[RMDB]
Chemical mapping of a 177-nucleotide RNA with DMS and 2A3. The data come from the RNA Mapping Database (RMDB), library M2PK50. For 2A3 the reverse transcriptase was SuperScript II with manganese.

RNA sequence: GGGAACGACUCGAGUAGAGUCGAAAACGCGUCAGAUUCGUCUGACGCGAAAGCAUAGAACAGCGCUAACAUGUAUUAUAGUUCUAUGCAACUAUAGCGCUAAAACGAUACCGUUCGCGGUAUCGAAACCAUAUGGAGGCUUCGGCCUCCAUAUGGUAAAAGAAACAACAACAACAAC
Reactivity to DMS in 0.01 (KOAc 150mM, MgCl2 10mM, bicine 150mM(pH8.5), 24C), signal-to-noise 1, nucleotides 027 to 126: c030g030c000g000u000c000a000g000a010u000u030c210g010u010c010u000g010a010c010g040c000g000a020a010a130g020c010a020u000a000g000a010a060c020a070g010c000g020c000u000a110a230c240a100u000g070u000a060u000u000a060u010a120g020u010u010c010u000a000u010g000c020a140a050c150u000a020u000a020g010c000g000c070u010a050a090a070a170c030g000a010u000a010c000c000g000u010u000c230g010c000g000g020u010a010u000c000g000a060a050
Reactivity to 2A3 in 0.01 (KOAc 150mM, MgCl2 10mM, bicine 150mM(pH8.5), 24C), signal-to-noise 2, nucleotides 027 to 126: c000g000c000g020u040c000a000g010a020u040u070c100g080u000c060u010g060a000c000g000c000g000a000a010a000g000c000a000u010a000g000a030a020c040a010g000c000g000c010u030a040a010c040a100u170g190u240a230u280u120a100u110a060g000u000u010c030u060a040u050g000c000a000a000c010u090a030u080a150g000c000g000c060u060a040a160a000a000c000g000a000u000a000c010c000g010u020u040c300g010c020g140g030u000a010u000c000g000a050a010